[RMDB]
RNA sequence: GGGAACGACUCGAGUAGAGUCGAAAAUUGUGGUCAAGACCUUGGCGUAGUAUCCAAGGUUGUCAAGGUUCCUAUUGACUUAACAAUGUUUGAGUUUAUGUUAUGGUGUAAGGAUGGACAGGGGAAAGUAGUCAAUACUCUUCGGAGUAUUGACUACAAAAGAAACAACAACAACAAC
Reactivity to 2A3 in 0.01 (KOAc 150mM, MgCl2 10mM, bicine 150mM(pH8.5), 24C), signal-to-noise 3, nucleotides 027 to 126: u010u030g010u040g050g020u070c030a050a000g020a030c000c000u000u000g010g000c050g050u090a030g040u070a110u040c020c020a010a010g050g000u000u060g000u010c010a030a040g070g000u030u080c030c000u040a100u030u070g010a010c000u010u060a070a000c050a060a200u100g080u050u110u130g080a070g010u080u080u060a120u120g090u070u030a070u140g050g020u050g000u080a050a050g030g010a040u070g020g010a020c060a050g000g000g000g000a010a080a030
Reactivity to DMS in 0.01 (KOAc 150mM, MgCl2 10mM, bicine 150mM(pH8.5), 24C), signal-to-noise 6, nucleotides 027 to 126: u010u000g030u000g010g000u000c050a050a100g010a020c000c000u000u000g000g010c210g010u000a130g020u010a130u000c040c040a030a030g010g000u000u000g010u000c080a070a070g010g000u000u000c050c080u000a130u010u000g000a020c010u000u000a080a030c040a060a040u010g000u010u000u000g010a110g020u000u010u000a040u010g020u000u000a070u000g010g010u000g000u000a070a070g000g000a080u000g010g000a050c070a070g000g000g010g000a110a050a090